An RNA of 177 nucleotides, treated with 2A3 and DMS and read out base by base.
Conditions: 150 mM KOAc, 10 mM MgCl2 and 150 mM bicine (pH 8.5), 24 C.
For 2A3, 716 sequencing reads were counted.
For 2A3 the reverse transcriptase was SuperScript II with manganese.
The DMS profile rests on 1,551 reads.
It was measured as part of the RMDB library RFM100.
DMS adducts were read by reverse transcription with MarathonRT.
RNA sequence: GGGAACGACUCGAGUAGAGUCGAAAACCAGGCAGCCCAACCCUGACCUAAAGUAAAUUCCCGGAAGAAGUCUUUCCUGGGUUUUGAAUUUGCAGUAACAGGUGUGAGCAUUCUAGCAGCAGUUUGAAUCAUCGCCAUGAUUCGUCAUGGCGAUGAUAAAAGAAACAACAACAACAAC
Reactivity to 2A3 in 0.01 (KOAc 150mM, MgCl2 10mM, bicine 150mM(pH8.5), 24C), signal-to-noise 1, nucleotides 027 to 126: c020c000a010g000g020c010a010g000c040c000c000a000a060c020c000c000u010g040a050c000c000u000a040a030a090g000u010a000a030a050u000u030c010c020c000g000g000a020a000g040a090a040g080u050c080u040u020u000c000c000u130g000g090g000u010u010u000u010g030a010a000u050u090u040g010c030a010g060u070a110a060c000a020g000g000u090g050u040g060a030g000c030a060u050u110c050u130a030g000c040a000g070c000a020g010u070u110u110g130a010
Reactivity to DMS in 0.01 (KOAc 150mM, MgCl2 10mM, bicine 150mM(pH8.5), 24C), signal-to-noise 1, nucleotides 027 to 126: c010c000a050g010g000c000a080g000c010c000c080a130a110c060c010c020u010g000a120c060c020u010a070a010a000g020u040a060a030a060u010u010c000c010c100g000g020a090a010g000a260a140g000u040c040u030u000u010c000c000u030g060g050g000u000u000u000u000g000a120a080u030u000u020g000c020a000g000u050a070a140c060a000g000g000u000g000u000g010a060g000c050a090u000u010c080u070a050g010c060a020g000c070a130g000u000u000u000g000a070